[RMDB]
RNA sequence: GGGAACGACUCGAGUAGAGUCGAAAAGAUAUGGAGUUACUUUAGGGAGCCUGGUAUCGGAAACGAUACGCAGGCAUCGAUCUAACUGGUAACUCCUAAGUCAAACACCACAGUUCGCUGUGGUGAAGGUAUUAGGUGACUUCGGUCACCUAAUACCAAAAGAAACAACAACAACAAC
Reactivity to 2A3 in 0.01 (KOAc 150mM, MgCl2 10mM, bicine 150mM(pH8.5), 24C), signal-to-noise 2, nucleotides 027 to 126: g010a000u050a020u080g000g010a080g000u010u000a010c020u110u160u240a040g040g040g090a110g000c010c000u000g040g000u000a010u010c000g000g000a010a010a010c010g010a000u010a040c290g050c300a000g010g000c000a000u040c000g000a050u060c030u120a030a000c050u050g050g000u010a010a010c010u000c000c000u010a020a000g000u010c020a000a080a060c000a000c000c010a000c010a000g000u080u150c270g040c140u000g000u010g000g010u010g010a010a010
Reactivity to DMS in 0.01 (KOAc 150mM, MgCl2 10mM, bicine 150mM(pH8.5), 24C), signal-to-noise 2, nucleotides 027 to 126: g040a030u000a230u000g000g010a040g000u000u000a000c020u000u010u010a050g000g000g050a080g020c000c000u000g010g000u030a000u010c000g020g000a080a030a200c020g020a000u020a000c000g000c010a000g030g050c000a060u010c240g010a080u010c090u000a210a190c300u000g020g000u000a000a000c010u000c000c010u000a000a080g000u000c020a150a120a300c010a010c010c000a000c000a010g000u010u010c210g070c010u000g010u010g000g020u000g000a040a030